[RMDB]
RNA sequence: GGGAACGACUCGAGUAGAGUCGAAAAAGUUAGAAAACAAGAAUGCGGUGCAGCCAGAGAAUCACAGGAGAUGAGGGGAUGGGUGUGUUGGUUACCAACCCACACCCAGGCAUGCUCGGUGGUAUGAGCAUACGUGGAAAUUCGUUUCCACGUAUGCAAAAGAAACAACAACAACAAC
Reactivity to 2A3 in 0.01 (KOAc 150mM, MgCl2 10mM, bicine 150mM(pH8.5), 24C), signal-to-noise 5, nucleotides 027 to 126: a010g070u070u070a100g080a040a080a020a010c040a000a060g100a090a050u170g040c030g050g030u060g010c050a010g000c010c010a010g020a000g050a140a070u070c020a040c020a080g080g020a040g020a040u080g010a030g010g030g030g040a050u030g000g000g000u010g000u000g020u080u210g010g010u070u070a200c060c040a040a020c000c000c000a000c000a000c000c000c000a000g020g000c010a010u120g020c010u020c040g010g010u030g020g030u110a100u120g080a070
Reactivity to DMS in 0.01 (KOAc 150mM, MgCl2 10mM, bicine 150mM(pH8.5), 24C), signal-to-noise 4, nucleotides 027 to 126: a050g020u020u030a080g000a110a070a100a060c130a080a110g000a070a040u020g010c070g010g010u000g020c030a050g010c040c030a070g000a120g000a100a030u030c030a010c110a080g030g010a050g000a060u010g000a050g010g000g010g010a160u000g000g000g010u000g000u000g020u040u030g010g000u010u020a100c270c160a060a130c010c000c020a000c030a010c000c000c000a010g000g000c060a050u010g020c000u000c040g000g000u010g020g000u020a060u030g010a210